[RMDB]
RNA sequence: GGGAACGACUCGAGUAGAGUCGAAAAAACAACAACAACAAGAAUUACCUCCAUUACCCAGUAUUACCACUUCAUUUUACAAUGGGGGUUAAUGGAUUAUUACAAAUAUUGAGAGAAAUCCAAGAUCGCAAAACAACUUAUUCGUAAGUUGUUUUGCAAAAGAAACAACAACAACAAC
Reactivity to DMS in 0.01 (KOAc 150mM, MgCl2 10mM, bicine 150mM(pH8.5), 24C), signal-to-noise 1, nucleotides 027 to 126: a060a030c000a050a130c030a010a030c000a020a020c160a080a090g030a160a090u000u000a020c000c010u000c000c000a000u010u000a210c000c000c020a150g000u000a090u010u030a010c090c100a080c150u010u000c100a060u000u000u050u000a110c140a110a020u000g000g060g000g000g030u000u000a000a000u000g000g000a020u010u010a080u000u000a110c090a070a130a090u050a080u030u000g020a300g000a150g000a100a030a020u010c020c010a110a090g000a090u020c170
Reactivity to 2A3 in 0.01 (KOAc 150mM, MgCl2 10mM, bicine 150mM(pH8.5), 24C), signal-to-noise 1, nucleotides 027 to 126: a040a000c050a030a000c000a000a000c020a030a000c000a080a000g070a190a190u080u040a030c000c000u000c000c000a000u000u000a020c000c010c050a000g020u120a120u110u070a070c010c030a070c100u160u110c100a100u110u080u140u090a010c010a040a000u000g010g000g000g000g000u000u020a020a020u010g010g000a000u030u040a090u130u050a070c000a000a080a080u180a190u300u180g020a190g000a020g000a040a020a000u010c050c030a020a000g150a090u290c190